Source: RMDB library OK1LIB, as collected in RNAgym. Chemical mapping of a 177-nucleotide RNA with 2A3 and DMS. For 2A3, 3,938 sequencing reads were counted. Reactivities are given for positions 27 through 126.

RNA sequence: GGGAACGACUCGAGUAGAGUCGAAAAGCGCGAGGAUGGCAUGCGAUAAAUCUCAGAGAAAGAGAGACAACGAAGAAACGCUAUCGCGAUGACGUCGACUCGUCUCUCACUCUUGAGGACGCGCAAAGGGUAAAUCAAACUUCGGUUUGAUUUACCCAAAAGAAACAACAACAACAAC
Reactivity to 2A3 in 0.01 (KOAc 150mM, MgCl2 10mM, bicine 150mM(pH8.5), 24C), signal-to-noise 5, nucleotides 027 to 126: g040c010g000c010g030a090g060g040a040u120g090g050c100a060u160g010c020g040a010u070a090a110a100u070c000u000c000a000g000a000g020a040a230a000g000a000g010a000g000a000c010a060a000c110g030a030a030g080a060a130a000c010g000c020u120a130u300c120g000c040g130a170u080g020a040c020g010u050c010g030a150c100u030c150g000u000c010u000c000u000c010a060c000u030c000u010u060g000a000g000g000a010c040g000c000g000c000a120a000a010
Reactivity to DMS in 0.01 (KOAc 150mM, MgCl2 10mM, bicine 150mM(pH8.5), 24C), signal-to-noise 3, nucleotides 027 to 126: g010c040g020c010g000a110g050g000a030u020g000g040c070a200u000g010c070g000a120u040a020a070a190u030c000u000c010a030g000a010g000a050a160a120g030a030g020a020g030a000c020a120a140c040g000a020a020g000a140a090a030c000g000c000u030a220u010c180g030c050g000a060u000g000a300c300g010u000c000g000a130c240u000c090g000u000c000u030c000u000c000a040c010u000c000u000u000g020a000g020g000a120c090g000c000g010c070a090a120a080